[RMDB]
RNA sequence: GGGAACGACUCGAGUAGAGUCGAAAAGACUGGCGUAGCUGGCGUACCUAUACCAUAGCCAGCGAAGGUAUAGGAUAGGAUAUGGGAAUGAGUACCGUAAACCAUAUCCACGGUACUCAAGCCAGGAGGGAUCCCUGGUGUUCGCAUUAGGGAUCCCAAAAGAAACAACAACAACAAC
Reactivity to DMS in 0.01 (KOAc 150mM, MgCl2 10mM, bicine 150mM(pH8.5), 24C), signal-to-noise 9, nucleotides 027 to 126: g020a160c020u010g010g000c010g010u010a160g010c020u000g010g010c040g020u030a100c020c020u010a030u010a040c070c060a100u020a150g010c020c040a040g000c030g010a070a140g000g010u000a010u000a040g020g000a170u020a110g010g010a070u010a030u010g020g000g010a110a130u020g000a050g010u010a040c050c030g000u010a080a090a150c100c080a050u010a060u020c080c080a050c030g000g000u000a000c010u000c030a040a090g010c010c000a010g000g000a150
Reactivity to 2A3 in 0.01 (KOAc 150mM, MgCl2 10mM, bicine 150mM(pH8.5), 24C), signal-to-noise 9, nucleotides 027 to 126: g080a020c020u010g010g010c030g090u090a050g030c030u020g050g000c020g040u070a110c010c000u050a040u040a090c020c040a080u100a050g050c020c010a010g000c020g010a010a000g010g010u030a010u030a020g070g030a080u090a100g040g010a020u030a040u110g060g000g050a090a140u120g020a060g070u080a070c020c030g030u060a070a040a060c050c030a040u040a020u110c030c030a000c000g000g010u010a000c000u000c030a010a010g010c000c000a020g020g010a100